Description
Structure probing data (2A3 and DMS) for a 177-nucleotide construct.
RNA sequence: GGGAACGACUCGAGUAGAGUCGAAAACUAGAUGGCGCUUCGGACAACGGCAUCACAUAAGAGAUGCAGCUCCUGACUUCUCCUCUGAUCUUCGUGAUCAGAGUUUUGAGUCGUCAGACUACGAGCAGAAGUAUCGUAGCUUCGGCUACGAUACUUCAAAAGAAACAACAACAACAAC
Reactivity to 2A3 in 0.01 (KOAc 150mM, MgCl2 10mM, bicine 150mM(pH8.5), 24C), signal-to-noise 3, nucleotides 027 to 126: c080u060a030g000a080u080g010g050c050g010c030u060u070c070g040g000a080c030a070a090c150g020g000c020a000u040c010a060c030a080u260a150a090g070a000g000a050u040g070c040a020g000c030u000c000c020u000g020a000c000u000u000c000u000c000c000u010c000u000g000a000u000c000u070u190c250g160u210g010a000u000c020a000g010a000g000u020u010u110u070g000a000g000u000c010g010u000c000a010g010a010c040u130a050c070g040a000g010c030a010
Reactivity to DMS in 0.01 (KOAc 150mM, MgCl2 10mM, bicine 150mM(pH8.5), 24C), signal-to-noise 2, nucleotides 027 to 126: c000u000a000g000a060u030g010g000c130g000c020u000u000c090g000g010a050c050a050a100c080g000g030c020a000u000c010a070c100a260u020a110a140g000a110g000a020u000g000c070a150g000c020u020c030c000u000g010a030c000u000u000c000u000c030c010u000c000u030g000a000u000c000u000u050c150g020u010g010a000u000c000a000g000a000g000u000u040u050u010g000a000g050u000c010g000u000c000a030g010a100c090u060a080c230g010a050g020c090a200